[RMDB]
Record summary
An RNA of 207 nucleotides, treated with DMS and 2A3 and read out base by base. The 2A3 profile rests on 2,370 reads. High DMS reactivity at an A or C suggests that its Watson-Crick edge is free. Values cover nucleotides 27 to 156. For DMS, 5,628 sequencing reads were counted. For 2A3 the reverse transcriptase was SuperScript II with manganese.
RNA sequence: GGGAACGACUCGAGUAGAGUCGAAAAGUGCCGGCAAUACAGUGUGUAUGGAGGUCUCAAUGGCUCGGAAGUGCCAGCAAACCGGCGUAGAUAUUAGCAGACGUAUCGGCGUAAGACUUUUAUUGAAAAAAGUACAUAAGCUUCGGCUUAUGUACAAUCUAUGGUUAAAGUUCGCUUUAACCAUAGAAAAAGAAACAACAACAACAAC
Reactivity to DMS in 0.01 (KOAc 150mM, MgCl2 10mM, bicine 150mM(pH8.5), 24C), signal-to-noise 2, nucleotides 027 to 156: g030u000g020c000c010g040g000c030a090a130u010a050c050a110g030u000g000u000g040u000a080u010g010g020a100g000g010u000c000u040c050a090a140u000g010g030c000u000c030g020g000a100a140g010u010g020c010c000a070g000c060a050a090a040c020c010g020g010c000g000u010a060g010a080u000a050u000u010a080g020c050a180g000a080c060g010u000a030u010c030g010g020c020g020u000a040a120g000a120c050u000u000u010u000a090u020u020g000a010a040a070a080a120a160g020u000a000c000a000u000a010a010g010c010u000u010c300g050g000c010u000u000a000u000g010u000a000c000a000a000
Reactivity to 2A3 in 0.01 (KOAc 150mM, MgCl2 10mM, bicine 150mM(pH8.5), 24C), signal-to-noise 3, nucleotides 027 to 156: g070u050g010c010c010g010g050c060a040a020u060a070c050a050g100u040g010u010g020u200a060u060g040g040a030g020g060u000c020u010c060a090a150u070g000g010c030u040c050g040g060a120a020g030u020g050c010c000a030g050c080a020a060a010c010c000g000g020c010g020u050a030g020a080u080a040u110u110a030g030c040a000g010a060c030g020u030a050u100c010g040g000c010g040u030a030a030g030a040c000u030u060u110u160a140u100u250g040a040a020a030a040a050a060g000u000a000c000a000u000a000a000g000c010u020u090c210g030g010c000u000u010a000u000g010u000a000c000a010a000